Annotation: The data come from the RNA Mapping Database (RMDB), library M2PK50. The record gives the reactivity of an RNA of 177 nucleotides to 2A3 and DMS. For DMS the reverse transcriptase was MarathonRT. The reactions ran in a buffer of 150 mM KOAc, 10 mM MgCl2 and 150 mM bicine (pH 8.5), at 24 C.
RNA sequence: GGGAACGACUCGAGUAGAGUCGAAAAUCAUCUAUGUUCGCAUAGAUGAACACAGCCUUGUAGUUUUAGUGGACUUUAGGCUAAAGAAUUUCACUAGAAUAAUAAUCGGGUGUUUCGACACCCGAAAGUUAAUAGAUCUAUUCGUAGAUCUAUUAACAAAAGAAACAACAACAACAAC
Reactivity to 2A3 in 0.01 (KOAc 150mM, MgCl2 10mM, bicine 150mM(pH8.5), 24C), signal-to-noise 6, nucleotides 027 to 126: u000c000a000u010c000u000a010u010g020u010u050c190g000c120a000u000a010g010a000u010g000a030a010c090a000c020a010g060c000c010u060u100g150u140a120g000u010u010u030u020a000g000u020g010g010a010c000u050u030u040a080g050g060c050u080a090a090a030g060a070a160u050u150u110c000a000c010u020a010g050a060a080u170a170a030u110a070a100u050c000g000g000g010u010g030u020u070u060c140g040a010c000a000c000c000c000g000a000a000a000
Reactivity to DMS in 0.01 (KOAc 150mM, MgCl2 10mM, bicine 150mM(pH8.5), 24C), signal-to-noise 5, nucleotides 027 to 126: u000c000a000u010c000u000a010u000g010u000u010c230g030c010a010u000a000g000a000u000g010a010a080c150a090c130a200g000c010c010u000u000g030u010a100g010u000u000u000u000a010g060u000g010g000a010c030u000u000u000a050g020g020c110u000a030a070a120g010a130a090u010u000u010c000a010c010u000a030g000a080a060u010a060a080u010a070a150u020c010g000g020g020u000g000u000u000u010c140g010a050c010a010c000c000c000g000a000a000a070